[RMDB]
RNA sequence: GGGAACGACUCGAGUAGAGUCGAAAAGCACCAGGGGCCUGUAAGUGCUCCUUACCCAGCCCUGCCCCCUGGAUGGCUGGGCACCUCAGGGCUGUGGACAUGGAGGACCCCAGGAGCAGUGGGGAGUCCCUGGGGGAAGCCUCAUGUAGGGAAGCAGACAAUGUAUGGCAUUCGUGCCAUACAUUGUAAAAGAAACAACAACAACAAC
Reactivity to 2A3 in 0.01 (KOAc 150mM, MgCl2 10mM, bicine 150mM(pH8.5), 24C), signal-to-noise 1, nucleotides 027 to 156: g030c020a010c050c020a010g000g010g010g030c060c090u210g070u260a170a120g040u080g160c010u000c010c030u000u040a050c000c000c000a000g010c000c010c000u030g020c010c000c010c000c020u020g000g100a120u090g140g060c100u100g080g030g000c020a100c000c060u060c030a020g020g000g030c010u030g050u200g040g000a020c020a020u080g080g040a000g010g030a040c000c000c000c000a000g000g000a050g020c080a050g050u160g000g040g010g000a050g030u040c030c000c010u010g000g000g000g040g000a110a020g070c020c000u000c010a020u050g030u020a030g030g030g010a120a030g000c000a010g000